[RMDB]
RNA sequence: GGGAACGACUCGAGUAGAGUCGAAAAAGGUGAUCUGUCUGCCUUGGCCUCCCAAAGUGCUGGGAUUACAGGCCUGAGCCACUGCACACAGCCACAACUUUUAGAUUUGAGACUUGUCAUUGUGCAGCGAUCUCUCAAAUUUCGAUUUGAGAGAUCGAAAAGAAACAACAACAACAAC
Reactivity to 2A3 in 0.01 (KOAc 150mM, MgCl2 10mM, bicine 150mM(pH8.5), 24C), signal-to-noise 3, nucleotides 027 to 126: a010g020g000u030g010a120u040c070u160g130u060c040u140g050c000c000u030u040g040g000c010c000u000c000c000c000a050a060a000g160u100g040c040u010g000g000g010a030u110u210a090c090a080g000g030c010c030u020g010a020g000c000c000a030c000u000g000c010a010c000a010c010a030g010c040c010a030c010a060a040c030u110u140u130u250a160g070a300u110u080u200g090a070g020a100c040u040u040g030u060c030a090u000u120g000u020g030c000a020g010
Reactivity to DMS in 0.01 (KOAc 150mM, MgCl2 10mM, bicine 150mM(pH8.5), 24C), signal-to-noise 4, nucleotides 027 to 126: a050g000g030u010g010a060u000c050u010g010u000c060u000g020c020c020u000u000g000g010c040c040u000c010c020c020a030a060a040g020u010g020c040u000g010g010g000a160u000u000a060c270a050g000g010c010c030u000g000a060g020c010c020a300c020u010g010c020a020c040a070c100a060g000c030c050a050c050a030a040c090u010u000u000u000a100g010a100u000u000u010g000a110g000a020c070u000u000g020u010c120a110u000u000g010u000g020c040a050g000
The record gives the reactivity of an RNA of 177 nucleotides to 2A3 and DMS. Conditions: 150 mM KOAc, 10 mM MgCl2 and 150 mM bicine (pH 8.5), 24 C. Source: RMDB library OK2TRN, as collected in RNAgym. 2A3 adducts were read by reverse transcription with SuperScript II with manganese.